[RMDB]
RNA sequence: GGGAACGACUCGAGUAGAGUCGAAAAAAGUGAUUAUUCGUAAUCACUUCACGCCGGGCGCGGUCGCGCGUGCCUGUAGUCCCAGCUACUCGGGAGGCUAAACGACGUACCCGUUCGCGGGUACGAAGAGAUCGGUAUAGUUCGCUAUACCGAUCUCAAAAGAAACAACAACAACAAC
Reactivity to DMS in 0.01 (KOAc 150mM, MgCl2 10mM, bicine 150mM(pH8.5), 24C), signal-to-noise 3, nucleotides 027 to 126: a000a000g010u000g020a000u010u000a030u010u010c200g020u000a000a000u000c000a010c000u000u000c070a080c190g010c040c010g000g000g000c000g020c010g000g000u000c180g010c050g000c000g010u000g000c000c000u000g000u010a030g000u000c000c000c020a060g010c010u000a110c090u010c050g010g010g010a060g000g000c020u010a090a060a080c140g000a220c010g010u000a000c000c000c010g000u000u010c130g020c030g010g000g010u000a000c000g010a050a080
Structure probing data (DMS) for a 177-nucleotide construct. Source: RMDB library M2PK50, as collected in RNAgym. Conditions: 150 mM KOAc, 10 mM MgCl2 and 150 mM bicine (pH 8.5), 24 C. For DMS, 2,954 sequencing reads were counted.